An RNA of 177 nucleotides, treated with DMS and 2A3 and read out base by base.
For DMS, 3,004 sequencing reads were counted.
The reactions ran in a buffer of 150 mM KOAc, 10 mM MgCl2 and 150 mM bicine (pH 8.5), at 24 C.
For 2A3, 1,777 sequencing reads were counted.
The data come from the RNA Mapping Database (RMDB), library OK2TST.
Values are in units of 0.01, from 0 to 300, in steps of 10.

[RMDB]
RNA sequence: GGGAACGACUCGAGUAGAGUCGAAAAUGGGUAUGGCUCAGGCAGUUCCGGCUUUACGCGAAUUUAUCGACGUGACCGGUAUUCCUGCGGUGGCUACCCUGAAAGGUUUGGGCGCACCGGAUACUAAGCCACAUUACCAAUUCGUUGGUAAUGUGGCAAAAGAAACAACAACAACAAC
Reactivity to DMS in 0.01 (KOAc 150mM, MgCl2 10mM, bicine 150mM(pH8.5), 24C), signal-to-noise 3, nucleotides 027 to 126: u010g000g000g000u000a040u000g010g010c010u010c000a070g000g000c210a030g010u010u000c000c000g000g010c170u010u010u010a020c020g010c010g030a060a240u000u010u020a100u020c030g030a110c000g000u000g000a030c010c010g000g000u000a060u010u000c050c000u000g000c200g010g000u000g010g030c050u000a020c010c010c020u000g000a060a080a080g010g000u000u000u000g000g000g010c090g000c060a040c040c020g000g010a120u000a060c110u000a040a190
Reactivity to 2A3 in 0.01 (KOAc 150mM, MgCl2 10mM, bicine 150mM(pH8.5), 24C), signal-to-noise 2, nucleotides 027 to 126: u100g040g000g000u120a100u190g070g000c010u030c030a010g070g000c030a010g040u010u090c000c010g000g020c060u040u090u090a030c000g010c030g000a050a080u270u230u130a300u290c060g170a270c020g180u000g030a010c000c010g020g030u020a070u020u040c000c000u000g010c000g000g050u040g030g020c010u020a030c010c000c020u000g090a080a050a000g050g000u090u100u080g030g000g000c070g000c010a000c000c000g030g000a080u040a140c060u120a090a050